The record gives the reactivity of an RNA of 207 nucleotides to 2A3 and DMS.
The reactions ran in a buffer of 150 mM KOAc, 10 mM MgCl2 and 150 mM bicine (pH 8.5), at 24 C.
RNA sequence: GGGAACGACUCGAGUAGAGUCGAAAACUGCCUUCCUUCAUUCACUGCUCUGUCUCUCAUAUCCACAACAUGCCCACUCCUGCUUAUCCUUUAAAUUGCAGCUCAGUGGUUGCUUUCUACAGGAAGACUUUGUCACUGAUCCUGACUAGAUGAGGAACGUAUUUUACUCCUUCGGGAGUAAAAUACGAAAAGAAACAACAACAACAAC
Reactivity to 2A3 in 0.01 (KOAc 150mM, MgCl2 10mM, bicine 150mM(pH8.5), 24C), signal-to-noise 4, nucleotides 027 to 156: c030u050g020c010c010u030u000c010c010u060u070c040a060u090u070c030a020c060u030g000c010u000c000u050g040u000c010u020c010u000c060a060u060a110u210c060c060a070c020a150a040c020a090u090g030c000c020c000a030c040u070c020c000u030g030c020u140u100a090u160c010c000u010u120u070a090a150a100u120u070g020c000a000g000c010u000c090a030g020u020g040g010u030u060g000c000u010u030u020c040u050a090c050a040g000g040a030a020g030a030c000u080u080u160g040u040c020a020c060u030g030a090u060c010c000u050g040a140c030u070a030g090a180u140g020a030g030g070a030a040
Reactivity to DMS in 0.01 (KOAc 150mM, MgCl2 10mM, bicine 150mM(pH8.5), 24C), signal-to-noise 1, nucleotides 027 to 156: c020u020g030c020c010u010u000c030c040u000u020c020a060u010u000c020a120c120u000g000c040u000c030u000g010u010c000u010c060u010c030a110u010a120u000c050c040a100c030a030a080c040a080u000g020c090c010c000a140c050u000c020c050u010g000c020u010u000a080u000c010c020u000u030u020a060a090a050u010u000g000c040a030g000c040u000c040a130g000u000g030g020u000u000g010c010u000u000u010c030u020a090c110a060g000g000a060a110g000a070c050u030u000u000g000u010c030a050c060u000g030a070u000c030c010u020g000a160c070u010a110g010a140u010g020a010g040g010a110a290